[RMDB]
RNA sequence: GGGAACGACUCGAGUAGAGUCGAAAAGAAGGAGAGUAGAUGAUUCGCGUUAAGUGUGUGUGAAUGGGAAGUCGUCACACAACGAAGCGAGAGCGCGGUGAAUCAUUGCUUCCGCUCCAAAACAAAACACAAGCGACUAGUUCGCUAGUCGCUUGUGAAAAGAAACAACAACAACAAC
Reactivity to 2A3 in 0.01 (KOAc 150mM, MgCl2 10mM, bicine 150mM(pH8.5), 24C), signal-to-noise 1, nucleotides 027 to 126: g220a100a060g000g010a000g000a000g010u000a030g030a010u000g010a000u000u000c000g000c010g000u010u080a020a020g000u020g000u000g010u000g000u000g040a020a010u000g000g010g000a010a000g030u160c160g000u000c020a000c000a000c000a000a000c010g030a020a000g000c000g010a010g000a020g030c020g000c000g000g030u000g000a000a010u000c000a000u000u000g000c000u010u000c000c020g010c010u000c000c000a000a060a030a030c110a000a040a030a010
Reactivity to DMS in 0.01 (KOAc 150mM, MgCl2 10mM, bicine 150mM(pH8.5), 24C), signal-to-noise 1, nucleotides 027 to 126: g000a160a000g000g010a010g000a010g000u000a300g000a000u000g000a000u000u000c050g020c030g080u020u000a010a060g020u000g000u000g000u000g000u000g050a060a010u010g010g000g000a030a030g000u020c110g040u000c000a000c000a000c010a010a070c040g010a100a060g060c000g000a150g000a300g030c060g000c060g040g080u000g020a030a000u000c000a000u000u010g000c000u030u000c030c020g000c000u000c000c000a050a070a110a060c190a060a060a060a170
Source: RMDB library OK1LIB, as collected in RNAgym. Structure probing data (2A3 and DMS) for a 177-nucleotide construct. The reactions ran in a buffer of 150 mM KOAc, 10 mM MgCl2 and 150 mM bicine (pH 8.5), at 24 C. For DMS, 1,451 sequencing reads were counted. The 2A3 profile rests on 1,952 reads.